The record gives the reactivity of an RNA of 177 nucleotides to DMS and 2A3. The reactions ran in a buffer of 150 mM KOAc, 10 mM MgCl2 and 150 mM bicine (pH 8.5), at 24 C. The 2A3 profile rests on 4,491 reads.
[RMDB]
RNA sequence: GGGAACGACUCGAGUAGAGUCGAAAAUUAAAGGAGUGAAGGUACAAGCGACAGUGUCCAACUGAGGUAAUCGUCCACUGCCAGUACCAAGACGUGCGUAGUCAACUCAAAGGCAGAACGCAAAAAAGUAGUAUCGUAUGUUCGCAUACGAUACUACAAAAGAAACAACAACAACAAC
Reactivity to DMS in 0.01 (KOAc 150mM, MgCl2 10mM, bicine 150mM(pH8.5), 24C), signal-to-noise 4, nucleotides 027 to 126: u010u010a080a090a120g010g010a080g020u010g000a110a130g000g010u000a030c050a120a120g010c090g000a040c030a010g000u000g010u010c090c170a080a050c070u000g020a080g010g020u000a080a080u000c050g010u000c140c070a010c020u000g000c020c010a070g020u000a050c030c010a040a120g010a070c120g010u000g010c060g020u000a100g010u000c020a090a090c040u000c050a040a120a150g010g000c030a020g000a060a060c020g020c090a000a030a050a080a050a080
Reactivity to 2A3 in 0.01 (KOAc 150mM, MgCl2 10mM, bicine 150mM(pH8.5), 24C), signal-to-noise 3, nucleotides 027 to 126: u180u080a090a030a030g110g030a080g040u110g070a130a050g030g000u020a050c050a080a040g050c050g140a090c020a040g020u000g040u070c030c030a070a010c080u100g020a020g110g030u160a070a090u090c030g030u000c030c000a010c020u000g000c000c000a020g010u000a020c010c020a030a010g050a020c070g040u060g040c040g010u090a010g010u020c000a010a020c020u030c000a020a020a020g030g000c020a030g030a130a010c020g000c000a000a030a030a030a030a080